This 207-nucleotide RNA was probed chemically with DMS and 2A3. The RNA was probed in 150 mM KOAc, 10 mM MgCl2 and 150 mM bicine (pH 8.5) at 24 C. The 2A3 profile rests on 3,558 reads.
RNA sequence: GGGAACGACUCGAGUAGAGUCGAAAAACCGCAUUCGUGCGGUCCAAGGUCCUAAGUCAUUACAUCGAUCGGUUCAUAGGCAACAGCUAUCGGAAACGAUAGACAUGCCUGGGAACCGGGAGUAAUGAUAUGGAAUAUAGCAGGUUUCGACCUGCAAGCAUCACAACAGAUUCGUCUGUUGUGAUGCAAAAGAAACAACAACAACAAC
Reactivity to DMS in 0.01 (KOAc 150mM, MgCl2 10mM, bicine 150mM(pH8.5), 24C), signal-to-noise 1, nucleotides 027 to 156: a020c000c000g020c010a070u000u010c210g050u020g010c020g020g010u000c020c060a060a270g030g000u010c000c000u000a070a300g000u000c000a030u000u000a040c000a300u030c080g000a140u040c010g000g020u020u000c010a110u010a010g000g000c000a000a110c090a230g020c010u000a000u020c030g000g000a140a160a180c030g030a020u000a020g020a050c070a300u000g010c010c000u010g030g060g000a010a000c000c000g000g000g010a050g020u000a000a010u000g000a020u000a100u000g000g000a040a050u000a100u020a150g000c000a010g030g000u000u010u010c210g020a020c020c000u000g000c000a000a250
Reactivity to 2A3 in 0.01 (KOAc 150mM, MgCl2 10mM, bicine 150mM(pH8.5), 24C), signal-to-noise 5, nucleotides 027 to 156: a000c000c010g000c010a020u010u140c240g140u050g000c020g020g000u020c020c030a140a090g140g050u000c010c010u060a140a030g020u010c000a010u000u030a020c120a300u100c090g190a140u090c010g020g000u020u000c010a040u070a030g000g000c000a020a030c050a240g030c020u000a000u000c000g070g000a140a030a020c020g000a000u000a000g070a050c000a020u070g000c000c010u010g020g030g000a010a000c000c000g000g010g000a010g010u000a000a000u000g000a000u000a040u080g010g050a070a050u190a040u090a090g010c000a010g000g040u040u150u300c220g150a100c000c000u000g020c020a000a020